RNA sequence: GGGAACGACUCGAGUAGAGUCGAAAAAUUAGCAUAUCGCGAUAUAUGCAUCGCGGCAUAUUAGCUAUAAUAUGCAUGCGCUACGUAAUUAUAGCUAUAUAAUCGCGGCGCGCGCAUUAUAAUUACGAAGCUCCAAAUCAUUCGUGAUUUGGAGCUUAAAAGAAACAACAACAACAAC
Reactivity to DMS in 0.01 (KOAc 150mM, MgCl2 10mM, bicine 150mM(pH8.5), 24C), signal-to-noise 1, nucleotides 027 to 126: a070u010u010a060g030c030a050u000a040u000c070g030c010g000a030u000a130u010a100u000g080c090a090u000c040g030c070g000g010c190a020u000a050u000u000a060g000c060u010a000u000a070a040u000a000u000g000c010a030u060g050c020g020c050u010a090c010g010u000a030a020u000u000a000u000a000g030c130u020a120u000a030u000a030a010u000c010g000c000g010g000c080g000c070g020c060g000c010a020u000u000a080u000a040a080u000u000a090c170g010
The record gives the reactivity of an RNA of 177 nucleotides to DMS. The data come from the RNA Mapping Database (RMDB), library OK2TRN. Conditions: 150 mM KOAc, 10 mM MgCl2 and 150 mM bicine (pH 8.5), 24 C.